[RMDB]
RNA sequence: GGGAACGACUCGAGUAGAGUCGAAAAACUGAAGGAUGUUCGGCAUCAUGAUGGCGACGCGGUCGCCCUUGACCAGCCCGCGUGACUGGAGCCAUGCGGCAAGCGCACGCGAAUGGUCGUCCAGUUAGCUGAUACCAUCAUUCGUGAUGGUAUCAGCAAAAGAAACAACAACAACAAC
Reactivity to 2A3 in 0.01 (KOAc 150mM, MgCl2 10mM, bicine 150mM(pH8.5), 24C), signal-to-noise 2, nucleotides 027 to 126: a000c020u030g020a100a030g110g020a030u080g060u120u110c090g170g000c040a000u020c020a040u090g060a070u120g030g170c030g000a010c030g070c090g300g040u010c010g000c000c000c000u050u080g000a020c020c000a010g050c060c040c010g000c000g030u030g040a060c010u030g000g030a020g000c020c020a060u200g070c040g090g010c020a020a040g070c080g000c110a020c070g000c000g030a060a030u010g000g010u020c020g040u030c060c000a030g010u000u050a030
Reactivity to DMS in 0.01 (KOAc 150mM, MgCl2 10mM, bicine 150mM(pH8.5), 24C), signal-to-noise 2, nucleotides 027 to 126: a100c030u000g000a120a090g010g010a030u000g000u010u030c140g020g000c060a110u000c020a100u020g010a150u000g010g000c020g030a070c060g000c170g030g000u000c020g000c040c010c040u000u000g000a040c090c030a080g010c150c050c030g050c100g010u000g010a070c000u000g000g040a300g000c010c020a070u020g020c190g000g010c020a110a110g020c190g000c030a050c000g000c010g000a060a020u000g020g000u000c030g010u020c040c020a020g000u010u000a060
Chemical mapping of a 177-nucleotide RNA with 2A3 and DMS. For 2A3 the reverse transcriptase was SuperScript II with manganese. For DMS, 1,849 sequencing reads were counted. The 2A3 profile rests on 2,744 reads. For DMS the reverse transcriptase was MarathonRT.